Conditions: 150 mM KOAc, 10 mM MgCl2 and 150 mM bicine (pH 8.5), 24 C. The record gives the reactivity of an RNA of 207 nucleotides to DMS and 2A3. Values cover nucleotides 27 to 156. For 2A3, 18,428 sequencing reads were counted. For DMS, 7,713 sequencing reads were counted. Values are in units of 0.01, from 0 to 300, in steps of 10. DMS adducts were read by reverse transcription with MarathonRT.
RNA sequence: GGGAACGACUCGAGUAGAGUCGAAAACGCUGGGAUCGAGGUGUGACCACGCGACGAACUACCUGAAGCGCGCACGGGCGUCGUAUCAACACCCUCGAUCCUGUGCUGAAGCGCGCACGGCAACCGAAAGGUGCGAACUAUGCUCUUCGGAGCAUAAACACUUAGGUUAUUUCGAUAACCUAAGUGUAAAAGAAACAACAACAACAAC
Reactivity to DMS in 0.01 (KOAc 150mM, MgCl2 10mM, bicine 150mM(pH8.5), 24C), signal-to-noise 3, nucleotides 027 to 156: c080g020c050u000g030g030g000a020u000c000g000a040g030g010u000g040u000g020a220c140c140a090c100g010c020g000a050c030g010a110a220c070u000a130c030c010u020g010a060a070g020c020g020c020g010c010a300c040g020g010g010c000g030u000c010g040u000a070u010c060a110a140c020a050c020c010c020u000c020g000a010u010c030c000u000g000u000g000c020u000g010a130a110g020c010g000c010g030c000a190c030g020g020c040a090a200c040c000g000a080a130a160g000g040u000g020c000g010a100a120c090u000a030u000g010c010u000c010u000u010c270g040g000a000g020c000a000u000a010a160
Reactivity to 2A3 in 0.01 (KOAc 150mM, MgCl2 10mM, bicine 150mM(pH8.5), 24C), signal-to-noise 9, nucleotides 027 to 156: c040g000c030u070g000g000g000a000u000c010g000a020g010g060u200g020u020g170a150c090c090a140c280g010c000g020a000c010g030a130a150c080u140a130c140c040u080g060a160a050g010c000g000c000g000c020a040c040g020g020g000c010g000u010c000g010u040a090u300c080a080a150c000a010c020c000c000u000c000g000a000u000c000c000u000g000u020g000c030u090g030a100a040g010c000g000c000g000c020a010c010g040g000c020a050a070c010c000g030a090a040a020g020g000u030g010c010g010a050a010c050u020a030u030g000c000u000c000u040u070c250g080g000a000g000c000a000u020a010a090